[RMDB]
RNA sequence: GGGAACGACUCGAGUAGAGUCGAAAAUGGUGCUCUUGUCACUCGUGCAAAAUAUAUUACAGAUGAUAUGCUCGCUGCUGCUUCGAUGGCUGUCGCUGAGCAGAUUUCGCCAAACAAAGCAGGCGCAUCAUACGGAGCGUUUCGACGCUCCGUAUGAAAAAGAAACAACAACAACAAC
Reactivity to DMS in 0.01 (KOAc 150mM, MgCl2 10mM, bicine 150mM(pH8.5), 24C), signal-to-noise 1, nucleotides 027 to 126: u000g010g010u000g010c010u010c040u000u000g000u000c100a090c150u000c060g040u020g010c050a060a040a100a070u000a090u000a060u000u040a130c150a140g000a200u010g010a050u000a030u000g030c020u000c030g010c020u000g000c050u000g020c050u010u000c220g010a280u000g010g020c000u000g010u010c190g020c060u000g010a030g000c080a040g000a090u000u000u000c200g000c000c030a040a030a140c300a020a100a080g000c030a050g000g010c010g000c090a110
Reactivity to 2A3 in 0.01 (KOAc 150mM, MgCl2 10mM, bicine 150mM(pH8.5), 24C), signal-to-noise 1, nucleotides 027 to 126: u100g040g000u020g040c020u030c000u050u150g060u120c040a050c060u000c020g020u110g070c020a000a060a250a000u110a080u050a050u140u170a130c050a040g110a100u060g020a050u160a050u160g010c030u000c050g000c020u070g020c000u020g000c030u040u040c080g100a110u170g050g020c000u010g010u000c010g000c000u080g010a010g000c040a000g030a000u060u010u030c020g050c000c080a060a080a070c080a030a080a000g070c050a080g050g020c010g000c000a090